Chemical mapping of a 177-nucleotide RNA with DMS and 2A3.
RNA sequence: GGGAACGACUCGAGUAGAGUCGAAAAGAUAUGGACCAGGAAUACAUCGAUCCUACCCACCUUUCUCGGAAACGAGAAAGAGGGGGAGUAUCAUGGUCCUAAGUCAAAACUGCUCUUCGGAGCAGAACUAGCUCAUCUACUUCGGUAGAUGAGCUAGAAAAGAAACAACAACAACAAC
Reactivity to DMS in 0.01 (KOAc 150mM, MgCl2 10mM, bicine 150mM(pH8.5), 24C), signal-to-noise 1, nucleotides 027 to 126: g010a030u000a220u000g000g010a000c000c000a040g000g010a130a130u010a080c040a180u000c170g020a140u010c050c010u000a250c000c000c000a070c010c000u000u000u000c000u010c020g010g010a030a040a120c010g000a000g000a000a000a000g000a100g020g000g000g010g000a130g000u000a020u000c030a050u000g010g010u000c000c000u010a000a050g010u010c020a060a060a090a170c000u000g000c000u000c000u000u010c220g030g000a010g000c000a000g000a040a130
Reactivity to 2A3 in 0.01 (KOAc 150mM, MgCl2 10mM, bicine 150mM(pH8.5), 24C), signal-to-noise 1, nucleotides 027 to 126: g020a000u030a040u060g020g000a000c000c000a010g130g100a200a050u120a080c030a110u120c180g140a100u130c020c030u120a200c040c000c000a080c000c010u000u020u000c000u010c000g000g050a050a060a030c000g010a020g000a000a010a000g010a040g000g010g000g000g030a040g000u000a000u030c010a030u030g010g000u000c000c000u020a070a010g020u040c000a010a010a120a200c000u010g000c000u010c010u050u030c290g130g010a000g000c010a000g000a000a020
For 2A3, 2,088 sequencing reads were counted. Reactivities are given for positions 27 through 126. It was measured as part of the RMDB library TTRDEL.